[RMDB]
RNA sequence: GGGAACGACUCGAGUAGAGUCGAAAAUGGAAAGUGCUUAGUACCUGCUGACUUGGUAGUAGUGCAAACACUAGUUGUAUGGCCCGCGAAGGAUGCCCAGAAGGUACCCGUAGGUAACAAGUGACACAAACCAAUACCGGUUCGCCGGUAUUGGUUUAAAAGAAACAACAACAACAAC
Reactivity to DMS in 0.01 (KOAc 150mM, MgCl2 10mM, bicine 150mM(pH8.5), 24C), signal-to-noise 3, nucleotides 027 to 126: u010g020g020a110a080a120g010u000g000c060u010u000a100g040u030a050c020c030u000g000c020u000g010a170c100u040u030g010g040u000a070g010u030a050g010u000g010c100a020a040a100c000a020c060u010a080g030u030u000g010u000a040u000g030g000c040c030c020g020c110g010a100a120g000g000a110u020g010c040c030c010a080g040a100a110g010g000u010a050c020c010c070g030u020a040g020g020u040a020a060c090a080a070g000u000g010a140c080a050c130
Reactivity to 2A3 in 0.01 (KOAc 150mM, MgCl2 10mM, bicine 150mM(pH8.5), 24C), signal-to-noise 2, nucleotides 027 to 126: u070g050g030a130a140a000g100u090g050c080u050u050a000g010u000a010c000c020u010g000c030u020g200a290c080u050u090g050g000u150a120g000u010a030g000u070g090c010a070a040a010c070a000c000u070a050g000u000u000g240u220a200u110g050g010c060c010c000g010c010g020a040a020g000g000a050u040g000c000c000c000a140g040a130a010g100g000u000a000c030c000c000g040u090a040g040g060u040a020a030c040a080a000g030u110g070a000c000a000c020